[RMDB]
Conditions: 150 mM KOAc, 10 mM MgCl2 and 150 mM bicine (pH 8.5), 24 C. Structure probing data (DMS and 2A3) for a 177-nucleotide construct. Reactivities are given for positions 27 through 126. For 2A3 the reverse transcriptase was SuperScript II with manganese.
RNA sequence: GGGAACGACUCGAGUAGAGUCGAAAAGGCGCGGAACUUGCCCAAUGCGCGGCGCGCGAGGCAGCGACGGGGAGCGCGCGAGCGAGGCGGGCCCACAGCCCCCGCCGCGGAGCCGAGGGCAAGGUCUACCCUAUGGAUAGUUCGCUAUCCAUAGGGUAAAAGAAACAACAACAACAAC
Reactivity to DMS in 0.01 (KOAc 150mM, MgCl2 10mM, bicine 150mM(pH8.5), 24C), signal-to-noise 3, nucleotides 027 to 126: g000g020c050g010c100g000g010a060a060c020u000u000g000c010c000c000a160a110u040g010c010g000c000g000g000c050g020c000g000c010g020a140g000g010c020a130g010c050g000a060c060g000g000g000g010a250g040c020g020c050g000c020g000a100g020c030g000a110g000g030c070g000g020g000c000c000c000a140c160a180g000c020c030c000c000c000g000c010c000g010c040g020g000a150g010c010c010g000a300g000g000g000c010a000a000g000g010u010c050u010
Reactivity to 2A3 in 0.01 (KOAc 150mM, MgCl2 10mM, bicine 150mM(pH8.5), 24C), signal-to-noise 6, nucleotides 027 to 126: g050g000c030g000c050g090g030a040a030c000u010u010g010c000c000c000a040a100u170g020c030g000c030g070g080c070g000c010g000c030g010a100g060g020c050a060g020c030g080a070c070g030g020g010g030a180g040c040g000c010g000c030g030a050g060c050g020a030g060g020c030g020g040g000c000c000c000a110c030a010g010c000c000c000c000c000g000c000c000g010c000g030g060a050g010c010c010g060a130g000g000g000c000a000a010g000g000u000c000u020